[RMDB]
RNA sequence: GGGAACGACUCGAGUAGAGUCGAAAAGAGGCGAAAUAAUUCCCAUCUCCUGUGUACGGCCGGAGAUGGGUGUGGCCGUACUAAUAAGCCUCAUAGUGACGAGAGUCACGAAUUCUGGAUAGCCUUUGGUAGUCGGCUAUCCUCUGACUACCGUAGAACUAUAAUACGGCUUCGGCCGUAUUAUAGUAAAAGAAACAACAACAACAAC
Reactivity to 2A3 in 0.01 (KOAc 150mM, MgCl2 10mM, bicine 150mM(pH8.5), 24C), signal-to-noise 4, nucleotides 027 to 156: g010a000g000g000c020g030a060a080a030u150a050a060u190u060c000c000c000a000u010c010u010c000c000u030g010u030g040u110a070c060g080g000c020c020g010g000a020g000a010u030g010g040g000u010g010u020g020g030c050c010g020u010a010c000u010a010a140u050a100a000g010c000c000u010c020a060u080a050g010u020g000a000c010g020a010g010a010g140u000c010a000c010g000a010a020u170u060c050u100g030g020a040u040a040g000c000c000u060u070u090g080g020u040a050g050u050c040g000g010c000u010a060u020c000c000u000c020u020g010a020c010u030a040c020c000g010u040a060g030a100
Reactivity to DMS in 0.01 (KOAc 150mM, MgCl2 10mM, bicine 150mM(pH8.5), 24C), signal-to-noise 3, nucleotides 027 to 156: g000a020g060g000c010g010a140a100a090u000a090a220u000u000c010c010c000a070u000c010u000c000c000u000g000u000g020u010a070c130g030g050c030c040g010g000a040g000a030u010g020g030g050u010g000u000g010g010c020c070g000u000a210c060u020a050a130u000a100a230g010c000c000u000c040a140u010a220g010u000g000a040c020g010a300g000a300g010u000c010a040c020g010a070a090u010u010c060u000g000g010a130u000a040g000c000c000u000u020u010g040g030u000a080g030u000c050g010g030c070u000a080u000c020c050u060c010u000g020a040c020u000a030c010c010g000u010a080g020a140
Chemical mapping of a 207-nucleotide RNA with 2A3 and DMS. It was measured as part of the RMDB library OK3TST. For 2A3 the reverse transcriptase was SuperScript II with manganese. The RNA was probed in 150 mM KOAc, 10 mM MgCl2 and 150 mM bicine (pH 8.5) at 24 C.